An RNA of 177 nucleotides, treated with DMS and 2A3 and read out base by base.
For 2A3 the reverse transcriptase was SuperScript II with manganese.
[RMDB]
RNA sequence: GGGAACGACUCGAGUAGAGUCGAAAAACAAAGAGUCCUUGGUCAAGAUCUUGUCCGAACCGAAGAACGCACUGGUCAAGCAGUACACCCGGCUCUUCGAAAUGGAUGGUGUGGAGCUGGAAUUCACCAUUAUCCCAUGGUUCGCCAUGGGAUAAUGAAAAGAAACAACAACAACAAC
Reactivity to DMS in 0.01 (KOAc 150mM, MgCl2 10mM, bicine 150mM(pH8.5), 24C), signal-to-noise 5, nucleotides 027 to 126: a070c140a080a070a090g000a060g030u020c030c030u000u000g010g020u000c080a100a080g000a060u010c060u010u010g000u000c020c020g000a070a100c130c030g000a060a050g000a050a090c080g010c090a070c050u000g000g010u010c110a040a100g010c060a020g030u010a080c100a100c060c050c060g000g000c030u010c020u010u000c060g000a060a060a070u040g000g000a060u010g010g000u000g010u000g000g010a110g040c030u010g010g000a060a070u020u000c030a090c100
Reactivity to 2A3 in 0.01 (KOAc 150mM, MgCl2 10mM, bicine 150mM(pH8.5), 24C), signal-to-noise 9, nucleotides 027 to 126: a010c110a020a090a020g080a010g050u020c020c010u060u090g060g020u060c050a090a070g010a150u030c030u070u100g020u040c020c010g060a050a030c040c020g020a080a030g020a120a020c060g000c040a040c070u040g020g010u060c030a040a030g040c020a030g050u070a030c030a060c060c000c000g010g000c010u000c000u060u010c030g080a080a080a120u180g080g040a050u070g010g100u080g020u030g050g010a010g010c020u010g030g040a050a070u060u080c040a030c100
High 2A3 reactivity points to a flexible backbone, as in loops and unpaired stretches.